[RMDB]
Chemical mapping of a 177-nucleotide RNA with DMS and 2A3. The RNA was probed in 150 mM KOAc, 10 mM MgCl2 and 150 mM bicine (pH 8.5) at 24 C. For 2A3 the reverse transcriptase was SuperScript II with manganese. DMS adducts were read by reverse transcription with MarathonRT.
RNA sequence: GGGAACGACUCGAGUAGAGUCGAAAAGAUAUGGAAGGUAGGGAGAAGUGGGUCGGAAACGACCCAGUUUCGACGAUCUACUUCCUAAGUCAAAACAAUCUAAGCAGGUUCGCCUGCUUAGAUUGAAGUCAUAACUUACCUUCGGGUAAGUUAUGACAAAAGAAACAACAACAACAAC
Reactivity to DMS in 0.01 (KOAc 150mM, MgCl2 10mM, bicine 150mM(pH8.5), 24C), signal-to-noise 3, nucleotides 027 to 126: g000a040u000a300u010g000g000a020a020g000g000u010a020g000g000g010a040g000a020a030g010u010g000g000g010u000c000g020g010a080a060a110c000g020a030c000c000c000a000g000u000u000u000c010g010a120c200g000a030u010c010u000a040c010u000u000c000c000u000a030a160g000u010c020a090a080a140a220c000a000a010u010c000u000a000a020g020c000a020g000g000u000u010c230g020c000c000u000g000c000u000u000a000g000a000u000u000g000a070a100
Reactivity to 2A3 in 0.01 (KOAc 150mM, MgCl2 10mM, bicine 150mM(pH8.5), 24C), signal-to-noise 3, nucleotides 027 to 126: g020a010u060a020u110g020g030a030a030g220g100u190a010g000g000g010a030g000a010a000g070u020g000g030g010u020c000g020g060a050a030a030c010g000a000c000c010c000a020g010u020u040u030c050g030a120c020g000a030u000c000u000a010c000u000u010c000c000u010a110a010g030u030c030a000a000a090a180c000a000a020u000c000u010a000a000g000c000a010g040g060u080u200c270g170c060c000u000g000c000u000u010a000g000a000u000u000g000a010a000